[RMDB]
RNA sequence: GGGAACGACUCGAGUAGAGUCGAAAAUUUGCCACUUUGGUCAAAAGGACAACGGCCAUACACCACUGGAGAUUUGGCUGCGCUGGCUUUUACUCCAUCAACAACGGUAGCUUCGACUGUGGCUGAAGGCGGUAAAUAAUUUCGAUUAUUUACCGCCAAAAGAAACAACAACAACAAC
Reactivity to 2A3 in 0.01 (KOAc 150mM, MgCl2 10mM, bicine 150mM(pH8.5), 24C), signal-to-noise 3, nucleotides 027 to 126: u030u020u070g030c000c010a010c050u050u080u090g010g030u030c030a050a060a110a120g060g010a060c030a190a100c080g010g000c020c000a010u030a050c070a020c080c010a080c120u080g070g020a090g080a250u060u080u060g050g040c010u030g020c130g050c130u060g000g000c010u080u000u000u040a090c030u020c010c010a090u080c060a020a130c010a060a000c040g060g000u050a000g040c010u050u050c020g050a040c010u050g020u030g020g000c000u030g030a060a010
Reactivity to DMS in 0.01 (KOAc 150mM, MgCl2 10mM, bicine 150mM(pH8.5), 24C), signal-to-noise 4, nucleotides 027 to 126: u000u000u010g020c010c000a060c040u000u010u010g020g010u000c060a060a050a070a080g010g000a100c080a070a100c060g000g000c040c010a060u010a080c120a110c020c020a120c170u000g000g020a090g020a250u010u000u000g030g020c010u000g010c080g020c090u010g000g000c030u000u000u000u000a130c050u010c000c020a040u010c140a100a060c120a050a080c100g000g010u000a040g030c080u000u000c110g000a070c080u000g000u000g000g020c020u000g010a100a120
This 177-nucleotide RNA was probed chemically with 2A3 and DMS. As a SHAPE reagent, 2A3 marks flexible, mostly unpaired nucleotides at the ribose 2'-OH. It was measured as part of the RMDB library OK2TRN. For DMS the reverse transcriptase was MarathonRT.